[RMDB]
RNA sequence: GGGAACGACUCGAGUAGAGUCGAAAAGGCGCAGUAUGAUCUGAUGCUUGCCGGGUAUCGCGAUGAAGAAAUCGCUCAGGCCGCCGCAGCGGUGAAACAGGCGCAAGCCGCCUAUGACUAUGCGCAGAUGUGCAGUGUUUUUCGAAACACUGCACAUAAAAGAAACAACAACAACAAC
Reactivity to DMS in 0.01 (KOAc 150mM, MgCl2 10mM, bicine 150mM(pH8.5), 24C), signal-to-noise 3, nucleotides 027 to 126: g020g020c010g020c010a040g030u010a050u020g000a100u000c020u000g010a070u000g000c000u010u010g000c090c020g000g010g000u010a070u000c130g010c010g000a000u000g020a150a160g000a080a130a040u000c030g010c010u010c170a100g010g000c000c020g010c050c250g000c130a090g010c000g000g000u010g000a090a040a060c110a060g010g010c090g010c030a080a070g000c110c020g010c060c060u000a050u010g010a140c070u000a070u000g010c010g020c040a130g010
Reactivity to 2A3 in 0.01 (KOAc 150mM, MgCl2 10mM, bicine 150mM(pH8.5), 24C), signal-to-noise 1, nucleotides 027 to 126: g110g000c040g000c020a000g030u130a070u110g100a160u080c010u070g030a040u090g060c030u010u070g020c040c020g090g020g050u120a070u190c050g000c020g030a010u020g020a130a190g110a140a230a000u020c020g000c020u010c050a120g090g000c000c000g030c000c060g060c050a030g010c000g000g000u000g030a030a020a020c060a020g070g000c000g030c110a060a020g040c040c000g000c010c010u040a080u060g020a010c000u010a040u130g030c010g020c050a030g030